Source: RMDB library M2RFPK, as collected in RNAgym. An RNA of 207 nucleotides, treated with 2A3 and DMS and read out base by base.
RNA sequence: GGGAACGACUCGAGUAGAGUCGAAAACAUUACGAAUUCAGUCGCCAAUUGUAGAAUUAGCUACUCUACGAUUUAGUGAGCGUUAGUAACGUUGUAAUAUAAUAUAGUCUUUGGAAGGAUUAUAUUGGAGCCGCGGACAAGUUCGCUUGUCCGCGAACGUAUCCAUUGUGUUCGCACAAUGGAUACGAAAAGAAACAACAACAACAAC
Reactivity to 2A3 in 0.01 (KOAc 150mM, MgCl2 10mM, bicine 150mM(pH8.5), 24C), signal-to-noise 3, nucleotides 027 to 156: c020a040u100u170a040c020g080a130a100u130u110c030a050g110u070c040g000c040c030a010a020u010u000g000u010a020g010a030a020u060u030a050g020c050u090a020c000u010c010u010a000c000g020a010u030u020u160a040g030u060g080a060g060c050g010u060u110a040g030u050a070a010c050g000u010u020g000u030a150a050u100a090u030a160a040u010a000u000a000g010u000c020u050u080u070g150g040a120a060g020g000a010u010u000a000u010a000u010u010g010g040a070g060c070c000g000c010g000g010a010c000a000a010g010u020u100c190g030c150u000u000g000u000c000c000g000c000g000a000a000
Reactivity to DMS in 0.01 (KOAc 150mM, MgCl2 10mM, bicine 150mM(pH8.5), 24C), signal-to-noise 1, nucleotides 027 to 156: c050a030u010u000a060c040g020a030a020u000u000c050a130g100u000c050g000c000c050a020a060u000u010g020u010a020g010a050a020u000u000a150g010c240u000a110c060u000c000u000a000c030g010a020u020u000u000a030g020u020g010a040g030c150g020u000u000a070g010u000a000a040c000g010u000u000g010u010a080a140u010a130u010a040a020u010a030u000a020g000u020c000u010u010u000g080g000a190a280g010g010a040u000u000a010u000a030u000u000g000g020a150g070c110c000g020c040g040g010a100c010a030a060g010u010u010c300g000c020u000u010g010u000c020c020g090c000g010a010a000

The DMS profile rests on 1,998 reads. DMS adducts were read by reverse transcription with MarathonRT.